[RMDB]
RNA sequence: GGGAACGACUCGAGUAGAGUCGAAAAUAGACCUGAUUCGUCAGGUCUACCAGCGAGGCAGAGAGCGAGGGUCCCACGCUCCCAGGGUCGCACGCUCCCAAAGACUUCCUGAAUUCGUUCAGGAAAACCUUCCUAUCUCGUUCGCGAGAUAGGAAGGAAAAGAAACAACAACAACAAC
Reactivity to DMS in 0.01 (KOAc 150mM, MgCl2 10mM, bicine 150mM(pH8.5), 24C), signal-to-noise 2, nucleotides 027 to 126: u000a020g000a020c000c000u000g000a030u000u010c170g000u000c000a000g000g000u000c000u000a010c110c040a080g000c080g000a080g010g020c070a060g000a110g010a030g030c020g020a080g060g000g010u000c030c030c010a130c040g010c030u000c000c020c030a070g010g020g000u010c010g000c020a130c020g010c030u000c000c030c020a100a090a130g010a100c120u000u010c000c000u000g000a030a040u000u020c230g000u000u000c000a010g010g000a000a010a040a160
Reactivity to 2A3 in 0.01 (KOAc 150mM, MgCl2 10mM, bicine 150mM(pH8.5), 24C), signal-to-noise 2, nucleotides 027 to 126: u060a000g000a000c010c010u000g010a050u040u060c130g040u030c070a000g000g010u010c000u010a020c000c000a000g050c010g040a060g050g060c090a050g080a010g000a000g050c000g020a070g060g050g040u050c040c020c010a020c010g030c000u010c010c000c000a050g120g040g030u040c030g000c040a040c000g050c030u050c000c000c000a070a120a020g080a060c100u040u020c010c000u010g020a020a010u060u030c170g040u100u000c020a010g000g000a010a010a000a000

The record gives the reactivity of an RNA of 177 nucleotides to DMS and 2A3.
For DMS, 1,248 sequencing reads were counted.
Conditions: 150 mM KOAc, 10 mM MgCl2 and 150 mM bicine (pH 8.5), 24 C.